[RMDB]
RNA sequence: GGGAACGACUCGAGUAGAGUCGAAAAGUUAUCGUUCGCGAUAACAAAAAGCGUACUACUAGGCCUAACCUACCCACCGGAUAUAUUGGUCCCAAAUAGGACAGGUAUCCGAGGGUUAGAAGCCUAGUAUCGCAAAAAACACCACUUCGGUGGUGAACAUCCCUACACCCUUCGGGGUGUAGGGAUGAAAAGAAACAACAACAACAAC
Reactivity to 2A3 in 0.01 (KOAc 150mM, MgCl2 10mM, bicine 150mM(pH8.5), 24C), signal-to-noise 2, nucleotides 027 to 156: g000u000u000a010u000c030g010u080u070c300g000c010g070a000u000a010a030c120a030a100a040a040a000g080c040g030u060a080c040u000a000c000u010a000g000g000c010c000u000a000a000c030c000u150a200c010c000c040a020c010c010g010g000a000u000a000u000a100u090u300g230g030u040c060c020c030a170a300a160u300a120g000g000a000c010a000g020g060u000a000u000c000c000g000a000g020g000g000u000u000a000g010a050a050g000c000c000u040a000g000u000a000u020c000g000c000a060a060a000a000a000a000c020a010c040c000a000c000u020u050c250g070g000u000g000g010u020g000a030a030